[RMDB]
RNA sequence: GGGAACGACUCGAGUAGAGUCGAAAAAUUACGAAGAAGGAUGACGAUACAACGUUAACAAGAACAUAUUUGAUUGUUUCUUGUAGUUGAAUUUUUGUAGAACCAAUUACUAAUAAGAAAUAAGAUGUCGCGUAAUACAUUUCGAUGUAUUACGCGAAAAAGAAACAACAACAACAAC
Reactivity to DMS in 0.01 (KOAc 150mM, MgCl2 10mM, bicine 150mM(pH8.5), 24C), signal-to-noise 2, nucleotides 027 to 126: a080u050u010a050c050g000a100a060g010a080a030g000g020a080u030g010a050c060g000a060u050a140c190a040a060c050g010u000u020a050a130c010a000a070g010a010a000c040a010u010a070u000u010u030g030a120u000u000g000u020u000u000c000u000u000g000u000a000g000u000u000g000a080a020u010u010u000u000u000g020u000a030g020a100a100c090c040a020a030u000u000a000c040u000a030a040u060a080a140g000a030a060a080u030a090a120g000a060u020g000
Reactivity to 2A3 in 0.01 (KOAc 150mM, MgCl2 10mM, bicine 150mM(pH8.5), 24C), signal-to-noise 2, nucleotides 027 to 126: a000u160u100a010c110g060a010a070g000a010a060g040g090a080u090g020a050c000g000a040u070a120c090a060a030c010g100u160u270a120a000c000a020a000g000a060a000c030a050u100a120u160u130u230g110a090u100u020g030u030u080u020c030u010u020g030u000a000g020u020u020g040a090a090u150u030u000u150u180g110u160a000g050a160a000c000c040a050a040u090u000a000c060u020a000a100u120a090a050g060a060a080a020u140a050a100g120a190u130g070
Description:
An RNA of 177 nucleotides, treated with DMS and 2A3 and read out base by base. For 2A3 the reverse transcriptase was SuperScript II with manganese. Reactivities are given for positions 27 through 126.